[RMDB]
Structure probing data (2A3 and DMS) for a 207-nucleotide construct. 2A3 is a SHAPE reagent: it acylates the 2'-hydroxyl of flexible nucleotides of all four kinds. The DMS profile rests on 1,899 reads. Source: RMDB library OK3TST, as collected in RNAgym.

RNA sequence: GGGAACGACUCGAGUAGAGUCGAAAAGUGUACUACUACCUUGACAAAGGAAAGGAGGAGAUCUUUGUAACUGCAAAAGGCAAGCAGCUCAAAUCAGUCAAGACUCAGAGAAUUGAACAAAUGCUCAUAAAGAAGUUCUUCCAAAAGAAGCUCAUGAGAUAUGCUUCUGAUUCGUCAGAAGCAUAUCAAAAGAAACAACAACAACAAC
Reactivity to 2A3 in 0.01 (KOAc 150mM, MgCl2 10mM, bicine 150mM(pH8.5), 24C), signal-to-noise 3, nucleotides 027 to 156: g050u030g030u050a050c020u010a010c010u050a050c040c010u040u060g080a050c110a080a100a020g060g000a030a110a030g020g010a030g030g030a060g010a050u040c040u090u080u040g060u070a060a140c040u090g030c050a040a110a060a000g040g010c020a040a020g000c040a000g000c020u030c050a100a180a060u080c020a010g060u030c010a080a000g020a040c010u010c100a010g060a000g040a070a140u140u140g020a090a020c030a090a090a010u100g010c010u000c060a070u140a090a130a020g030a030a000g010u060u010c000u030u020c040c040a010a120a000a060g030a070a010g000c020u040c120a060u110g040a000
Reactivity to DMS in 0.01 (KOAc 150mM, MgCl2 10mM, bicine 150mM(pH8.5), 24C), signal-to-noise 1, nucleotides 027 to 156: g030u020g030u000a080c010u010a050c020u020a110c040c020u000u010g000a090c140a050a070a120g010g010a060a030a110g000g000a060g010g000a160g010a080u000c020u020u000u000g030u010a090a150c040u000g010c070a060a050a090a070g020g000c060a110a140g010c000a060g000c010u020c000a030a040a080u000c030a100g010u000c030a070a090g010a110c020u010c020a080g000a160g010a020a050u000u000g000a070a050c050a030a050a030u000g000c030u000c010a140u010a090a080a200g030a050a100g000u010u010c020u010u060c030c050a010a030a060a160g010a110a180g000c080u000c020a050u000g010a300